[RMDB]
RNA sequence: GGGAACGACUCGAGUAGAGUCGAAAAGUUAACAUCUGAACAAUGUGCUCAACACUGGAGAUCCUUUUGUGGAUUUAGAUUUAAAUGUUUUAUGCCAUUGAGUCUAGAUAGUGACCUUACAAUGUACGAUUAUGUCAUGCUUCGGCAUGACAUAAUCAAAAGAAACAACAACAACAAC
Reactivity to 2A3 in 0.01 (KOAc 150mM, MgCl2 10mM, bicine 150mM(pH8.5), 24C), signal-to-noise 3, nucleotides 027 to 126: g020u020u010a080a000c000a000u010c000u000g010a010a000c000a000a020u040g080u190g020c020u020c060a000a020c030a010c070u060g060g030a050g020a040u010c020c000u090u240u140u200g300u200g070g010a010u000u040u050a070g000a060u090u120u250a110a160a040u060g060u020u010u050u100a090u240g000c000c000a000u020u000g020a080g080u000c040u040a010g010a020u040a100g020u000g030a020c010c020u030u040a020c030a090a160u180g040u120a070c070
Reactivity to DMS in 0.01 (KOAc 150mM, MgCl2 10mM, bicine 150mM(pH8.5), 24C), signal-to-noise 4, nucleotides 027 to 126: g000u000u000a130a060c010a070u010c010u010g000a040a040c030a020a010u010g010u010g010c010u010c300a030a020c020a020c080u000g000g020a080g010a000u000c000c010u000u010u010u000g010u000g000g000a010u000u000u010a070g000a160u010u010u000a060a050a090u000g010u000u000u020u010a060u010g040c030c000a010u000u010g000a140g000u000c000u010a010g000a010u010a090g020u000g010a030c070c030u010u010a090c240a090a060u010g000u000a100c240